[RMDB]
RNA sequence: GGGAACGACUCGAGUAGAGUCGAAAAUCAGAGUUUUGAGUCGUCAGACUACGAGCAGUUUCUCUUAGUCGUUGCAUCGGGUGCUGUUGCCUUAAGCAUGUGUAUAUGGGGUUCGGGGGCUGUUGCCGAUGUCAUAAAGCUUCGGCUUUAUGACAUCAAAAGAAACAACAACAACAAC
Reactivity to 2A3 in 0.01 (KOAc 150mM, MgCl2 10mM, bicine 150mM(pH8.5), 24C), signal-to-noise 1, nucleotides 027 to 126: u120c020a010g030a070g050u030u010u130u140g040a050g060u020c010g060u080c070a020g010a080c030u060a080c000g010a000g020c030a030g030u010u210u060c060u010c000u010u070a060g010u050c060g070u030u040g030c000a030u060c030g060g000g070u080g030c060u010g010u170u150g020c010c020u050u040a050a010g010c030a050u100g060u000g030u090a030u000a090u300g060g000g010g010u070u090c070g020g000g040g000g000c000u020g000u030u010g050c020c030
Reactivity to DMS in 0.01 (KOAc 150mM, MgCl2 10mM, bicine 150mM(pH8.5), 24C), signal-to-noise 3, nucleotides 027 to 126: u000c050a070g010a130g010u000u010u000u010g010a050g020u000c030g010u010c180a120g010a050c020u000a060c060g000a030g020c220a100g010u010u010u000c010u000c040u020u000a080g010u000c030g000u000u010g010c050a060u000c100g000g010g010u000g010c030u000g010u010u010g000c020c060u000u000a080a080g010c040a020u010g010u000g030u000a080u000a070u010g000g010g010g000u000u000c100g000g020g000g010g020c050u000g010u000u000g010c110c070